[RMDB]
RNA sequence: GGGAACGACUCGAGUAGAGUCGAAAAAAACUGGAGGAUCUAACCCUGAGCCGUGAAUCCGGCCAGAGGACCGUGUCAGCCGGUCAGUUUUACUGGGGCGGUAUCCUCCCAAAGAGUAACGGAGGAGUCACAUCACUAGUUUCGACUAGUGAUGUGAAAAAGAAACAACAACAACAAC
Reactivity to 2A3 in 0.01 (KOAc 150mM, MgCl2 10mM, bicine 150mM(pH8.5), 24C), signal-to-noise 6, nucleotides 027 to 126: a000a000a010c070u060g010g010a020g020g020a020u030c040u170a050a090c000c000c000u030g020a020g010c010c000g020u040g090a040a010u040c010c010g010g000c000c010a020g060a190g030g020a030c000c000g020u060g220u080c030a030g070c050c010g040g050u050c020a050g020u010u040u090u190a060c030u020g010g000g010g010c020g000g000u020a030u020c000c000u010c000c000c000a020a060a010g090a020g040u070a070a040c050g030g020a040g030g030a030g080
Reactivity to DMS in 0.01 (KOAc 150mM, MgCl2 10mM, bicine 150mM(pH8.5), 24C), signal-to-noise 6, nucleotides 027 to 126: a020a030a040c120u020g010g000a030g010g000a010u010c080u020a110a180c010c010c000u020g010a130g000c000c000g000u010g020a170a140u040c250c020g000g010c020c050a060g000a100g010g000a030c010c010g000u000g020u020c100a100g000c120c020g010g000u000c030a070g000u010u030u010u020a090c070u000g000g000g010g010c140g000g020u030a040u000c000c000u010c000c010c210a080a040a110g000a070g010u030a040a060c070g000g010a100g000g000a080g010